[RMDB]
RNA sequence: GGGAACGACUCGAGUAGAGUCGAAAACAACGAGAACGGACGCGAAGAUAUGUUCGUCCGCCAUAUGCAGCGACCGGCUGGGGCCAAUCGCGUAUUGGCCGACGCCGAGCUUUGCGCCGUCGGAAUAAGCAUCUGGAUCUCUGGCGUCCGGCGGAGCCGUACUACUUCCGUUCGCGGAAGUAGUACGAAAAGAAACAACAACAACAAC
Reactivity to DMS in 0.01 (KOAc 150mM, MgCl2 10mM, bicine 150mM(pH8.5), 24C), signal-to-noise 3, nucleotides 027 to 156: c040a090a120c060g000a190g000a100a040c000g010g000a030c000g040c030g020a130a140g000a170u010a040u000g000u000u000c020g020u000c000c020g030c030c050a140u010a080u000g020c040a130g000c050g010a020c030c010g010g010c010u000g020g020g000g020c030c010a030a020u000c060g010c180g030u000a080u000u000g000g020c000c010g020a250c280g000c030c010g000a100g010c020u010u010u000g000c000g010c010c010g000u000c000g010g000a070a090u000a090a180g030c040a080u000c030u010g010g000a140u000c060u000c030u010g020g020c050g010u000c000c000g040g020c010g000g010a080g030c060
Reactivity to 2A3 in 0.01 (KOAc 150mM, MgCl2 10mM, bicine 150mM(pH8.5), 24C), signal-to-noise 8, nucleotides 027 to 156: c040a020a050c050g060a010g040a170a010c010g010g020a010c010g030c070g080a130a070g060a200u190a120u300g090u090u080c010g000u000c000c000g010c010c010a120u160a050u210g060c040a010g010c020g060a050c040c000g010g000c020u070g150g060g070g000c010c000a010a000u020c060g030c080g300u260a010u000u000g000g000c000c000g020a020c040g000c000c000g000a000g000c000u070u080u060g010c020g000c000c010g000u010c000g000g070a050a110u150a170a060g030c000a050u080c080u200g110g080a180u100c080u020c050u150g110g010c020g030u000c000c000g000g000c000g000g000a000g010c020

Chemical mapping of a 207-nucleotide RNA with DMS and 2A3. The 2A3 profile rests on 14,797 reads. Source: RMDB library OK3TST, as collected in RNAgym. As a SHAPE reagent, 2A3 marks flexible, mostly unpaired nucleotides at the ribose 2'-OH. DMS (dimethyl sulfate) methylates the pairing face of unpaired adenines and cytosines.